[RMDB]
RNA sequence: GGGAACGACUCGAGUAGAGUCGAAAAUUUACGGUAUUCGUACCGUAAACGAGCAAGCAAGCAGCGCAACGACACAAGACGAUAAUAAGAUCGAGCAUGCUGAUAGUAGGAUCUUCGGAUCCUACAAACGCCAAAAAGGAUUCGUCCUUUUUGGCGUAAAAGAAACAACAACAACAAC
Reactivity to 2A3 in 0.01 (KOAc 150mM, MgCl2 10mM, bicine 150mM(pH8.5), 24C), signal-to-noise 2, nucleotides 027 to 126: u020u010u020a000c000g000g020u010a000u010u050c160g030u030a040c000c000g000u000a000a000a000c030g040a050g070c020a100a010g030c020a070a000g010c020a020g040c010g000c080a110a080c040g110a010c000a000c010a140a090g100a020c050g020a020u060a210a050u120a190a120g100a160u030c020g010a010g040c010a030u080g000c010u030g010a080u060a100g000u000a000g000g010a000u000c010u020u020c190g050g000a000u000c010c000u010a000c010a000a000
Reactivity to DMS in 0.01 (KOAc 150mM, MgCl2 10mM, bicine 150mM(pH8.5), 24C), signal-to-noise 3, nucleotides 027 to 126: u000u000u000a000c000g030g000u000a030u000u000c150g010u000a010c000c000g010u010a000a010a030c150g020a090g020c110a130a080g010c090a080a050g010c040a050g000c070g020c060a020a070c080g000a070c090a100c120a080a040g010a080c110g010a090u000a050a090u000a090a080g000a070u000c040g020a140g000c030a040u000g020c030u000g000a090u000a090g010u000a010g010g000a010u000c000u010u000c210g030g000a000u000c000c000u000a000c010a020a030